RNA sequence: GGGAACGACUCGAGUAGAGUCGAAAAGGAGCAGCAAGCUCAAAUAAGUACCGCUACAUGUCGCUCGAGCAGGAUCAUACUGUCAAAGAAGGCACCAUGGAUGACAUCAAGAUCAGCACCUCAGGACUGUGAGUCUAAUUUUCGAAUUAGACUCACAAAAAGAAACAACAACAACAAC
Reactivity to DMS in 0.01 (KOAc 150mM, MgCl2 10mM, bicine 150mM(pH8.5), 24C), signal-to-noise 3, nucleotides 027 to 126: g000g000a040g040c030a210g040c160a110a140g000c020u000c020a030a060a070u010a090a100g000u000a110c020c010g020c080u000a060c080a080u020g030u000c080g000c050u000c070g010a090g020c040a070g010g000a060u000c090a040u000a060c070u000g020u000c050a050a050a120g000a080a080g000g000c050a010c060c040a060u010g000g000a120u000g010a070c050a040u010c090a040a080g000a070u010c010a080g010c060a060c070c020u000c070a080g000g000a070c200
Reactivity to 2A3 in 0.01 (KOAc 150mM, MgCl2 10mM, bicine 150mM(pH8.5), 24C), signal-to-noise 3, nucleotides 027 to 126: g040g010a010g020c020a010g060c090a190a090g010c030u020c030a060a080a000u090a040a010g040u040a030c000c010g020c020u020a020c030a120u100g060u050c030g030c120u030c040g040a050g020c040a010g060g000a010u050c010a010u070a160c040u030g020u110c020a020a080a100g080a060a050g050g000c040a020c030c000a040u080g070g010a070u080g040a000c000a070u050c030a060a000g010a080u040c020a010g050c020a030c000c010u050c030a020g050g040a050c020